[RMDB]
RNA sequence: GGGAACGACUCGAGUAGAGUCGAAAAUGAUCUGGGCGAUCGCAUUCAUGAGGUUCUGAAUGCUGAUGAAAUGACCAGCCACUUCAAUGUUAUAAGACAGUUGCACAAACUGCAUCAACAAGAUGUGCCCGACGCAAGUCUUCGGACUUGCGUCGGGAAAAGAAACAACAACAACAAC
Reactivity to 2A3 in 0.01 (KOAc 150mM, MgCl2 10mM, bicine 150mM(pH8.5), 24C), signal-to-noise 1, nucleotides 027 to 126: u300g000a100u000c000u000g030g000g030c070g000a000u030c030g010c000a060u000u000c000a070u240g300a100g300g110u300u190c100u000g000a000a000u040g000c160u110g000a000u100g000a030a290a040u300g100a160c000c000a000g000c000c000a030c000u100u130c030a080a250u030g000u000u000a100u040a180a000g130a280c100a000g000u000u000g120c200a070c130a280a060a000c020u000g030c000a040u060c000a000a040c030a060a060g000a020u080g000u030g060
About this RNA
An RNA of 177 nucleotides, treated with 2A3 and read out base by base. The RNA was probed in 150 mM KOAc, 10 mM MgCl2 and 150 mM bicine (pH 8.5) at 24 C. The data come from the RNA Mapping Database (RMDB), library OK1LIB. The 2A3 profile rests on 312 reads.